[RMDB]
RNA sequence: GGGAACGACUCGAGUAGAGUCGAAAAGAUAUGGACCCAUGCGAGCGACGAUCUGGUGUGUCGGAAACGACACCCAGGGAGCUCCAUGGGUCCUAAGUCAAAAGUGUAUCUCUUCGGAGAUACACAACAUACGACUAACGUUCGCGUUAGUCGUAUGAAAAGAAACAACAACAACAAC
Reactivity to DMS in 0.01 (KOAc 150mM, MgCl2 10mM, bicine 150mM(pH8.5), 24C), signal-to-noise 3, nucleotides 027 to 126: g000a010u000a030u010g000g000a010c000c000c000a000u000g000c300g010a020g020c000g020a080c300g010a010u010c000u000g010g000u020g020u010g030u000c000g030g010a010a000a050c000g020a010c000a010c000c000c000a000g000g000g010a010g010c000u000c000c000a000u000g000g000g010u000c000c000u000a000a050g000u000c010a090a100a140a170g000u000g010u000a000u000c000u000c000u000u010c250g030g000a010g010a010u000a000c000a010c000a070a170
Reactivity to 2A3 in 0.01 (KOAc 150mM, MgCl2 10mM, bicine 150mM(pH8.5), 24C), signal-to-noise 3, nucleotides 027 to 126: g000a010u010a000u050g000g000a000c000c010c000a010u040g110c300g050a010g000c010g300a300c010g000a060u000c010u000g000g000u070g010u000g000u160c000g010g000a000a000a000c010g000a000c010a000c020c000c000a000g000g000g010a000g000c000u010c000c010a000u000g010g000g000u010c000c000u000a000a000g000u010c000a000a000a030a100g010u000g000u010a000u000c020u000c000u010u110c300g170g000a000g010a000u010a010c000a000c000a000a020